[RMDB]
RNA sequence: GGGAACGACUCGAGUAGAGUCGAAAAGGGCACAAUGACAAACUUUCCCGAUAGCCGAAGGGCAGGUGCAGCCAAGGGCCAGCUCCUCCGAGGGCAGCUGUCAGGGACACAUUGCAAAGAGGAGCCAUAAUCAGGCUGAAUUCGUUCAGCCUGAUUAAAAAGAAACAACAACAACAAC
Reactivity to DMS in 0.01 (KOAc 150mM, MgCl2 10mM, bicine 150mM(pH8.5), 24C), signal-to-noise 4, nucleotides 027 to 126: g000g010g020c040a040c060a130a090u010g000a100c160a070a110a110c110u010u000u000c000c000c020g030a150u010a130g010c030c020g030a130a100g020g010g010c020a040g020g020u000g020c030a180g000c020c020a060a130g010g000g000c050c140a120g000c030u000c020c000u000c010c040g010a280g000g000g000c000a030g010c120u000g000u000c030a190g010g000g000a060c130a030c100a060u000u000g020c040a050a170a120g000a040g020g000a030g020c050c210a080
Reactivity to 2A3 in 0.01 (KOAc 150mM, MgCl2 10mM, bicine 150mM(pH8.5), 24C), signal-to-noise 2, nucleotides 027 to 126: g030g010g010c050a020c050a070a130u200g040a080c050a020a260a000c070u080u030u040c000c010c000g040a100u110a010g020c000c020g050a060a060g060g020g000c030a050g000g070u050g020c000a010g000c020c010a020a080g040g000g020c000c020a030g030c000u010c000c020u000c020c040g070a050g060g130g020c070a000g000c040u030g030u060c070a090g130g130g040a010c020a010c000a070u040u150g010c000a030a090a020g010a020g030g000a010g000c000c010a020
Chemical mapping of a 177-nucleotide RNA with DMS and 2A3.
For 2A3, 1,592 sequencing reads were counted.
The DMS profile rests on 2,278 reads.
The RNA was probed in 150 mM KOAc, 10 mM MgCl2 and 150 mM bicine (pH 8.5) at 24 C.
Reactivities are given for positions 27 through 126.